[RMDB]
RNA sequence: GGGAACGACUCGAGUAGAGUCGAAAAGAUAUGGACAUUGAACUACAAUGAGGCAGGCGAAGAACUCGGAAACGAGGGAGCCUGUCGAAUUGCAAUGUCCUAAGUCAAAGGAUCCUUCGGGAUCCAACAACUGUACCAGGUUCGCCUGGUACAGUUGAAAAGAAACAACAACAACAAC
Reactivity to 2A3 in 0.01 (KOAc 150mM, MgCl2 10mM, bicine 150mM(pH8.5), 24C), signal-to-noise 2, nucleotides 027 to 126: g030a050u030a060u170g010g000a000c000a000u020u000g040a110a040c050u220a100c300a020a030u040g000a030g010g040c000a010g030g000c010g180a300a040g070a100a070c000u010c010g030g000a080a100a030c020g020a000g000g020g010a010g020c000c010u000g010u000c000g000a010a000u000u000g000c000a030a000u030g000u020c000c000u020a090a030g050u000c020a130a030a150g010g000a000u000c020c000u030u100c300g090g000g000a010u000c000c000a010a030
Reactivity to DMS in 0.01 (KOAc 150mM, MgCl2 10mM, bicine 150mM(pH8.5), 24C), signal-to-noise 2, nucleotides 027 to 126: g020a040u000a300u000g010g000a030c010a000u000u000g030a130a050c140u010a260c040a000a000u020g000a230g000g000c000a000g010g000c000g030a110a150g000a100a280c010u010c010g000g000a100a110a180c000g030a000g000g000g000a120g010c010c000u020g010u010c000g000a040a010u000u000g000c010a000a000u000g000u000c000c000u000a040a030g010u010c080a090a070a160g000g000a010u000c000c000u000u030c150g000g000g000a020u010c000c020a020a150